[RMDB]
Source information: The record gives the reactivity of an RNA of 177 nucleotides to DMS and 2A3. The data come from the RNA Mapping Database (RMDB), library M2PK50. 2A3 adducts were read by reverse transcription with SuperScript II with manganese.
RNA sequence: GGGAACGACUCGAGUAGAGUCGAAAAGAUCACCUGUUCGCAGGUGAUCAAUCUCCCAGUUGAUCGAAGUCUCACAGCCUCGUUGCCCACGAGGCACGGGCGUAUUGAUCCGCUUCGGCGGAUCAAAGUUAGUUCACAAGUUCGCUUGUGAACUAACAAAAGAAACAACAACAACAAC
Reactivity to DMS in 0.01 (KOAc 150mM, MgCl2 10mM, bicine 150mM(pH8.5), 24C), signal-to-noise 5, nucleotides 027 to 126: g000a010u000c000a000c000c000u000g010u000u010c200g030c010a010g000g010u000g010a000u000c000a020a100u010c240u000c000c000c000a150g010u000u000g000a060u010c110g010a110a160g010u000c010u000c090a150c190a130g000c000c000u010c030g010u000u010g000c050c040c040a180c190g000a110g010g020c000a010c120g000g010g010c030g020u000a040u010u000g000a010u000c000c000g020c000u000u010c180g040g020c010g010g000a010u000c000a000a010a080
Reactivity to 2A3 in 0.01 (KOAc 150mM, MgCl2 10mM, bicine 150mM(pH8.5), 24C), signal-to-noise 2, nucleotides 027 to 126: g010a010u010c010a010c000c010u000g030u070u080c270g030c110a000g060g020u010g000a000u020c000a000a000u010c010u000c040c000c000a000g110u180u210g110a150u180c120g080a150a030g190u000c050u050c060a120c070a050g000c010c010u100c070g070u070u180g030c010c000c020a080c070g020a110g040g000c000a000c010g000g010g000c040g020u040a060u020u020g000a000u010c000c000g020c020u050u070c210g100g000c040g000g000a000u000c000a000a000a000